The record gives the reactivity of an RNA of 177 nucleotides to 2A3 and DMS. Source: RMDB library OK1LIB, as collected in RNAgym. Reactivities are rounded to 0.1 and cut off at 0 and 3. The DMS profile rests on 8,741 reads.
[RMDB]
RNA sequence: GGGAACGACUCGAGUAGAGUCGAAAAGAUAAGGAGUGCGUGAGGAAUCGAGGCGAAUACAGAGAUUCCAAGCACUCUGUAUCACGCCGUCACGUGCCGACUGGCUGGUCACAUUCGGAAUAACAAACGUAAGUAGUAGCUUCGGCUACUACUUACGAAAAGAAACAACAACAACAAC
Reactivity to 2A3 in 0.01 (KOAc 150mM, MgCl2 10mM, bicine 150mM(pH8.5), 24C), signal-to-noise 7, nucleotides 027 to 126: g060a050u150a040a060g070g030a040g020u030g020c050g070u090g100a080g040g050a110a040u070c020g020a110g040g010c070g060a050a020u120a090c020a000g120a010g010a090u060u060c050c010a030a000g000c010a000c000u000c000u000g000u010a010u010c010a010c050g010c010c000g020u030c040a010c050g030u060g040c020c020g040a090c020u030g040g010c040u070g000g030u070c040a040c000a110u060u050c040g050g070a070a080u130a160a050c090a180a050a010
Reactivity to DMS in 0.01 (KOAc 150mM, MgCl2 10mM, bicine 150mM(pH8.5), 24C), signal-to-noise 5, nucleotides 027 to 126: g000a080u030a060a100g010g010a070g040u000g000c010g010u010g020a090g000g030a070a060u020c090g000a250g040g000c110g030a290a030u030a070c030a040g000a300g000a070u000u010c030c100a080a110g030c120a070c010u010c000u000g010u020a000u000c020a050c080g000c010c030g010u020c080a070c060g010u030g010c020c010g040a110c060u010g000g020c010u000g000g000u010c050a060c070a060u000u030c040g010g010a080a040u040a090a090c170a040a080a180